[RMDB]
RNA sequence: GGGAACGACUCGAGUAGAGUCGAAAAGUUUCCGGGUUCGCCCGGAAACAAAGUGUGUGUGAAAAAGAGAGAGAGAAAAACACACACACAAACUCUCUGUCAAAAGAGAAGUCUUCGGACUUCUCAACAUUGUCACGUUGUUCGCAACGUGACAAUGAAAAGAAACAACAACAACAAC
Reactivity to 2A3 in 0.01 (KOAc 150mM, MgCl2 10mM, bicine 150mM(pH8.5), 24C), signal-to-noise 1, nucleotides 027 to 126: g020u000u000u000c000c000g020g000g000u010u070c110g080c080c030c010g020g000a000a000a000c000a010a020a000g000u010g000u010g000u000g000u000g050a140a020a000a120a070g150a040g050a000g010a030g010a010g110a090a060a010a040a000c020a000c000a000c000a000c000a010c000a020a070a040c050u050c000u010c060u140g160u200c090a050a070a080a040g000a010g010a000a000g000u000c020u020u080c220g050g000a000c000u000u020c020u000c000a000a000
This 177-nucleotide RNA was probed chemically with 2A3. It was measured as part of the RMDB library M2PK50. For 2A3, 1,161 sequencing reads were counted.